[RMDB]
RNA sequence: GGGAACGACUCGAGUAGAGUCGAAAAGAUAUGGACUUAAAUUGCCGAAGAACAUAUACCUCUUCGGAAACGAAUGUAUAUGGGAGGCAUUUAAGUCCUAAGUCAAACACAACCUUCGGGUUGUGAACCUUCACAUUUUCUUCGGAAAAUGUGAAGGAAAAGAAACAACAACAACAAC
Reactivity to 2A3 in 0.01 (KOAc 150mM, MgCl2 10mM, bicine 150mM(pH8.5), 24C), signal-to-noise 1, nucleotides 027 to 126: g020a000u070a020u080g010g000a010c000u030u000a010a030a020u240u240g000c000c000g150a170a050g020a040a000c010a000u000a010u000a040c000c020u100c060u090u060c010g040g000a060a030a000c010g000a030a040u300g010u010a000u000a000u010g010g040g020a050g020g040c020a000u000u000u000a000a030g000u010c000c000u010a020a000g000u030c000a030a100a000c000a000c010a000a020c000c000u050u050c300g100g000g030u030u020g000u000g010a000a000
Reactivity to DMS in 0.01 (KOAc 150mM, MgCl2 10mM, bicine 150mM(pH8.5), 24C), signal-to-noise 1, nucleotides 027 to 126: g000a010u000a300u000g000g010a050c000u010u010a000a010a010u010u040g060c010c000g020a090a120g000a110a160c010a000u010a010u000a000c010c150u000c060u000u010c030g010g000a010a020a110c000g020a040a010u030g010u000a000u000a000u000g000g020g010a080g010g000c010a000u000u000u000a000a010g000u040c000c000u000a010a170g000u010c040a120a110a160c010a010c000a010a000c020c000u010u000c170g000g010g000u000u000g000u000g000a060a100
The data come from the RNA Mapping Database (RMDB), library TTRDEL. An RNA of 177 nucleotides, treated with 2A3 and DMS and read out base by base. For DMS the reverse transcriptase was MarathonRT. For 2A3, 2,070 sequencing reads were counted. The RNA was probed in 150 mM KOAc, 10 mM MgCl2 and 150 mM bicine (pH 8.5) at 24 C.